RNA sequence: GGGAACGACUCGAGUAGAGUCGAAAAACUGCCAUACGUGGCAGAAACACGCCUUACCAGGACUAAACAGCGUGUCUAAAAAACAGUCCUUCAUACCUGAUCUGGAGGGUAGAUCAGGAAUAUUAAAAAAAUCGGGUGAAGUUCGCUUCACCCGAAACCAAAAGUUGCUGUUCGCAGCAACUUUUGGAAAAGAAACAACAACAACAAC
Reactivity to 2A3 in 0.01 (KOAc 150mM, MgCl2 10mM, bicine 150mM(pH8.5), 24C), signal-to-noise 1, nucleotides 027 to 156: a000c010u010g010c010c000a020u020a030c150g050u020g000g000c000a010g040a000a000a000c000a000c010g000c000c000u000u080a020c030c030a000g000g010a000c000u030a130a030a000c000a020g000c000g000u010g000u040c090u040a010a010a040a030a000a020c040a000g000u000c020c000u030u110c100a070u060a160c000c020u000g000a000u010c010u020g020g060a070g080g070g050u080a000g010a000u010c020a010g050g000a000a000u030a030u040u110a000a010a000a000a010a000a090u020c010g020g000g000u000g000a010a010g000u040u110c150g020c040u000u010c010a000c030c010c010g000a000a000a000
This 207-nucleotide RNA was probed chemically with 2A3. Values are in units of 0.01, from 0 to 300, in steps of 10. Conditions: 150 mM KOAc, 10 mM MgCl2 and 150 mM bicine (pH 8.5), 24 C. Reactivities are given for positions 27 through 156. As a SHAPE reagent, 2A3 marks flexible, mostly unpaired nucleotides at the ribose 2'-OH. The 2A3 profile rests on 914 reads.